Chemical mapping of a 207-nucleotide RNA with 2A3 and DMS. The reactions ran in a buffer of 150 mM KOAc, 10 mM MgCl2 and 150 mM bicine (pH 8.5), at 24 C. The DMS profile rests on 2,266 reads. 2A3 is a SHAPE reagent: it acylates the 2'-hydroxyl of flexible nucleotides of all four kinds. Values cover nucleotides 27 to 156.
[RMDB]
RNA sequence: GGGAACGACUCGAGUAGAGUCGAAAAGUAUGUUACGAUUAUGAGACUAGCCAUAAUCGAUGAAGGUACUCGACUUCAUCGUAACAUAGAAUUGUCAGUGCGUACUGGCUAGUCUCAGUACGGCAGACUACACUCCUAGUCUGCCACUGACUAGGAGCACGAUGAGCAUGUUCGCAUGCUCAUCGUGAAAAGAAACAACAACAACAAC
Reactivity to 2A3 in 0.01 (KOAc 150mM, MgCl2 10mM, bicine 150mM(pH8.5), 24C), signal-to-noise 3, nucleotides 027 to 156: g030u020a010u100g040u080u230a070c050g030a140u070u050a080u160g000a000g000a000c000u000a000g000c000c000a030u080a170a080u060c000g000a000u000g030a020a000g000g030u030a050c020u010c110g060a030c000u020u000c020a000u010c000g000u000a020a010c050a080u120a050g120a090a170u160u200g130u110c100a080g090u090g220c040g060u100a060c050u020g010g000c010u000a000g000u000c000u000c000a000g000u000a010c000g000g050c010a010g030a080c030u040a020c090a030c050u030c010c000u000a000g000u000c000u020g110c010c000a000c010u000g000a000c000u000a010g040g000a000g020
Reactivity to DMS in 0.01 (KOAc 150mM, MgCl2 10mM, bicine 150mM(pH8.5), 24C), signal-to-noise 1, nucleotides 027 to 156: g040u010a020u000g000u000u000a050c030g010a100u000u000a140u000g030a030g020a040c030u000a040g030c000c010a060u000a050a200u000c020g030a070u000g030a010a000g010g060u000a140c240u000c100g010a100c020u010u010c000a010u000c000g030u000a060a060c030a090u000a110g020a150a170u000u000g030u000c020a160g040u000g020c060g000u000a160c260u000g050g020c010u000a030g000u000c010u000c000a030g030u000a030c020g000g000c000a100g010a170c030u000a030c110a050c060u010c050c000u000a010g030u010c080u000g010c090c060a000c040u010g000a010c000u000a010g010g050a070g000